An RNA of 177 nucleotides, treated with DMS and 2A3 and read out base by base. The data come from the RNA Mapping Database (RMDB), library OK1LIB. Reactivities are given for positions 27 through 126. High DMS reactivity at an A or C suggests that its Watson-Crick edge is free. For DMS the reverse transcriptase was MarathonRT. The 2A3 profile rests on 16,552 reads. The RNA was probed in 150 mM KOAc, 10 mM MgCl2 and 150 mM bicine (pH 8.5) at 24 C.
RNA sequence: GGGAACGACUCGAGUAGAGUCGAAAAUGUGCCAUUUGCCCGUACAGAUGAGGUGCAACGUUUGGUGGUACAGUCUGUGGUCUCUGGUUGCAAUUGCGACGCGAGUAGUAGCCAUCCUCAUUGCGGACUUUUAUGGAGUGUUCGCACUCCAUAAAAGAAAAGAAACAACAACAACAAC
Reactivity to DMS in 0.01 (KOAc 150mM, MgCl2 10mM, bicine 150mM(pH8.5), 24C), signal-to-noise 5, nucleotides 027 to 126: u010g000u000g020c020c010a060u010u000u010g010c030c020c030g010u040a120c100a060g000a090u010g010a120g010g020u010g010c050a030a070c100g010u020u040u030g020g020u000g010g010u010a070c040a150g000u010c050u010g000u010g020g010u000c030u010c020u020g000g010u000u020g000c040a160a090u020u010g010c010g000a040c040g010c080g000a060g010u000a070g010u000a080g000c070c040a080u020c010c010u000c050a080u020u010g000c030g000g000a240
Reactivity to 2A3 in 0.01 (KOAc 150mM, MgCl2 10mM, bicine 150mM(pH8.5), 24C), signal-to-noise 9, nucleotides 027 to 126: u090g020u040g010c010c000a050u080u060u130g040c010c010c010g050u070a050c030a040g090a080u080g040a100g080g060u060g030c030a030a050c070g060u090u160u180g120g010u040g000g000u030a030c010a020g060u010c030u040g070u060g060g040u020c020u000c030u070g060g020u040u080g020c070a170a200u130u140g020c020g020a030c020g030c020g090a020g020u070a020g010u020a030g050c010c010a050u060c000c010u040c020a050u030u120g020c050g030g010a060